[RMDB]
RNA sequence: GGGAACGACUCGAGUAGAGUCGAAAAAUGUUCGGCAGCGAAGCAUAGCGCGGCUGGUUGAGGCGCAGAUCCACCGUUACGAUGGCCGGAAGCUUCACAUCGAUGGUCUGCAAACCGCCAUCGACUAGAUGCUUUUACGUUUCGACGUAAAAGCAUCAAAAGAAACAACAACAACAAC
Reactivity to 2A3 in 0.01 (KOAc 150mM, MgCl2 10mM, bicine 150mM(pH8.5), 24C), signal-to-noise 2, nucleotides 027 to 126: a000u100g020u020u060c010g000g000c020a020g060c060g040a090a000g080c070a090u120a090g080c040g020c030g080g000c020u040g070g000u050u110g040a070g000g030c030g000c060a040g000a080u000c010c010a030c000c040g000u020u020a040c040g050a120u080g000g000c080c040g050g000a000a010g000c000u070u070c040a030c010a170u120c030g070a120u020g000g050u000c080u140g080c020a130a030a000c050c000g000c020c000a000u000c010g010a010c020u010a020
Reactivity to DMS in 0.01 (KOAc 150mM, MgCl2 10mM, bicine 150mM(pH8.5), 24C), signal-to-noise 3, nucleotides 027 to 126: a040u010g030u000u010c050g010g000c030a110g050c010g010a100a090g020c080a110u030a110g000c040g020c060g010g030c060u010g000g010u000u000g010a060g000g040c140g000c070a090g000a040u000c030c050a060c040c020g000u000u010a110c110g000a030u010g010g030c060c050g010g000a090a110g020c050u000u000c030a050c170a150u010c070g010a040u000g000g010u000c050u010g000c120a040a150a110c120c140g020c000c020a020u000c020g000a030c240u010a160